[RMDB]
RNA sequence: GGGAACGACUCGAGUAGAGUCGAAAAGCGUACUACGAUCAGCCUGAUGACAUGAGCCAUACGCAUCCCAAAUAGGAUGAAAUGGCUCAACAGCAUCAGGAACUACUGAUCGUAUCGCAAACGCAUCUAUCUUAACUUCGGUUAAGAUAGAUGCGAACGAUACACCAAGAUUCGUCUUGGUGUAUCGAAAAGAAACAACAACAACAAC
Reactivity to 2A3 in 0.01 (KOAc 150mM, MgCl2 10mM, bicine 150mM(pH8.5), 24C), signal-to-noise 8, nucleotides 027 to 156: g010c000g040u110a090c050u000a000c020g010a000u000c000a000g020c010c000u000g000a000u010g040a100c050a120u030g000a000g020c010c000a010u020a050c280g010c050a020u040c010c010c010a170a250a110u230a100g000g000a000u010g000a080a010a010u010g000g000c000u000c000a010a020c030a010g010c000a000u000c000a070g000g040a000a000c070u300a030c000u000g050a000u070c000g000u000a000u090c000g010c000a060a030a010c010g000c000a000u000c000u000a000u000c000u000u010a000a010c000u020u050c260g100g000u010u000a000a000g000a000u000a000g000a000u000g000c000g000a000a000
Reactivity to DMS in 0.01 (KOAc 150mM, MgCl2 10mM, bicine 150mM(pH8.5), 24C), signal-to-noise 4, nucleotides 027 to 156: g020c020g020u000a070c080u000a000c000g020a010u000c000a040g000c000c000u010g000a050u000g000a040c060a300u000g000a020g010c000c010a020u000a070c190g030c000a020u000c000c010c030a030a170a230u020a050g000g000a010u000g020a030a080a050u000g040g000c000u000c000a010a000c050a150g020c010a020u000c010a010g010g000a000a040c050u010a300c010u000g010a040u000c010g010u010a000u000c010g020c010a070a060a140c020g030c010a000u000c000u000a000u000c000u010u010a010a010c000u000u020c300g080g010u000u000a000a010g010a010u000a000g010a000u000g010c010g020a000a050
Chemical mapping of a 207-nucleotide RNA with 2A3 and DMS. Source: RMDB library RNAMAK, as collected in RNAgym. Conditions: 150 mM KOAc, 10 mM MgCl2 and 150 mM bicine (pH 8.5), 24 C.